The record gives the reactivity of an RNA of 177 nucleotides to 2A3. The data come from the RNA Mapping Database (RMDB), library TTRDES. The reactions ran in a buffer of 150 mM KOAc, 10 mM MgCl2 and 150 mM bicine (pH 8.5), at 24 C. The 2A3 profile rests on 1,189 reads. 2A3 adducts were read by reverse transcription with SuperScript II with manganese.
[RMDB]
RNA sequence: GGGAACGACUCGAGUAGAGUCGAAAAGAUAUGGAACUUGAUAAGCAACAGCUAUAUGUCGGAAACGACAUAAUAGACAUGCUUACAAGUUCCUAAGUCAAAACCGGUUAGGUUCGCCUAACCGGAACGAUUGGAGCAUCUUCGGAUGCUCCAAUCGAAAAGAAACAACAACAACAAC
Reactivity to 2A3 in 0.01 (KOAc 150mM, MgCl2 10mM, bicine 150mM(pH8.5), 24C), signal-to-noise 1, nucleotides 027 to 126: g000a010u010a010u050g030g010a000a000c000u000u000g000a060u300a030a020g050c150a090a070c090a300g000c000u000a010u010a000u050g070u000c000g000g030a000a030a000c020g050a000c000a010u040a080a110u010a030g000a030c090a300u300g000c010u010u020a020c000a020a040g000u030u000c000c000u010a000a010g000u000c000a000a010a080a140c010c010g060g010u030u030a040g020g120u020u080c300g200c070c000u000a020a020c000c050g000g000a020a030